Record summary: Structure probing data (DMS and 2A3) for a 177-nucleotide construct. The reactions ran in a buffer of 150 mM KOAc, 10 mM MgCl2 and 150 mM bicine (pH 8.5), at 24 C. For DMS, 7,312 sequencing reads were counted. For 2A3, 5,159 sequencing reads were counted. DMS adducts were read by reverse transcription with MarathonRT. Reactivities are given for positions 27 through 126.

RNA sequence: GGGAACGACUCGAGUAGAGUCGAAAAAGUGGAAGGCGGGGAGGCGGGGUUCCCGGGCUUACCUACGGGAACUGCUGGUUUCCCCUUAUGUCCAGUCCCUCUCCCGUCCUGGUGAAGGGAGAUUCCGCAUACUCUUUAAGUUCGCUUAAAGAGUAUGAAAAGAAACAACAACAACAAC
Reactivity to DMS in 0.01 (KOAc 150mM, MgCl2 10mM, bicine 150mM(pH8.5), 24C), signal-to-noise 3, nucleotides 027 to 126: a150g020u000g010g010a050a030g010g020c300g010g010g000g000a020g010g010c010g000g000g000g000u000u000c000c000c000g010g000g020c060u000u010a020c270c130u020a050c010g010g000g010a010a010c010u000g000c030u000g010g010u000u010u000c000c010c000c020u000u000a040u030g000u000c000c010a080g000u000c010c000c000u000c010u000c000c000c000g000u000c020c030u010g010g020u010g010a050a040g010g000g000a010g010a040u000u000c110c170g010
Reactivity to 2A3 in 0.01 (KOAc 150mM, MgCl2 10mM, bicine 150mM(pH8.5), 24C), signal-to-noise 4, nucleotides 027 to 126: a000g070u030g000g010a030a010g000g030c050g030g030g000g000a010g000g020c030g010g050g010g010u000u010c000c000c000g020g000g010c040u100u090a040c010c030u030a070c010g020g000g020a000a000c010u170g220c020u060g150g090u020u020u020c000c010c000c000u010u110a030u020g010u000c000c010a000g040u000c010c000c010u000c000u000c000c010c010g060u080c030c040u230g170g000u300g080a030a030g010g040g000a000g000a000u130u020c040c040g010